[RMDB]
RNA sequence: GGGAACGACUCGAGUAGAGUCGAAAAUGCUGUUUGGUGAUGGAUGGGAGGUUUGAAAGAGGCACAGAAUGUGAGUGAUGGUGAUGUGAGUAAUGGCAAUGUUGGGUUGUUUCCUGAUCCAUAAAACAAGCAAAUAAUUUUUUUGACCUAACUCAUCCGAUACUUGACGUUUCGACGUCAAGUAUCGAAAAGAAACAACAACAACAAC
Reactivity to DMS in 0.01 (KOAc 150mM, MgCl2 10mM, bicine 150mM(pH8.5), 24C), signal-to-noise 1, nucleotides 027 to 156: u000g020c030u040g040u000u010u000g000g100u000g000a170u000g050g000a060u010g020g000g020a100g030g020u020u000u000g040a060a090a110g010a140g020g030c090a090c040a090g010a040a160u000g030u010g000a100g030u030g000a130u030g040g060u000g000a010u040g070u000g000a150g070u010a050a130u010g040g000c030a090a220u000g020u000u010g010g010g000u010u000g020u000u010u000c030c010u000g000a050u000c100c050a020u000a040a030a070a000c050a040a150g010c090a090a090a070u000a050a010u020u000u000u000u000u000u000g000a100c030c010u000a040a110c060u010c020a220u000c030
Reactivity to 2A3 in 0.01 (KOAc 150mM, MgCl2 10mM, bicine 150mM(pH8.5), 24C), signal-to-noise 2, nucleotides 027 to 156: u160g000c010u000g010u060u020u090g030g030u020g010a070u020g080g000a040u020g000g000g010a050g000g010u000u100u090g050a010a020a020g050a010g000g040c040a010c000a120g100a050a110u100g000u040g020a080g050u070g020a040u070g010g000u070g020a120u020g040u030g030a020g000u060a070a060u080g060g000c010a020a020u080g010u040u020g000g000g000u000u010g000u020u010u000c010c050u020g020a040u000c010c020a010u110a110a080a050a050c070a060a000g030c040a000a070a050u140a030a150u140u100u050u040u040u110u100g050a030c020c000u030a040a080c040u020c100a070u070c080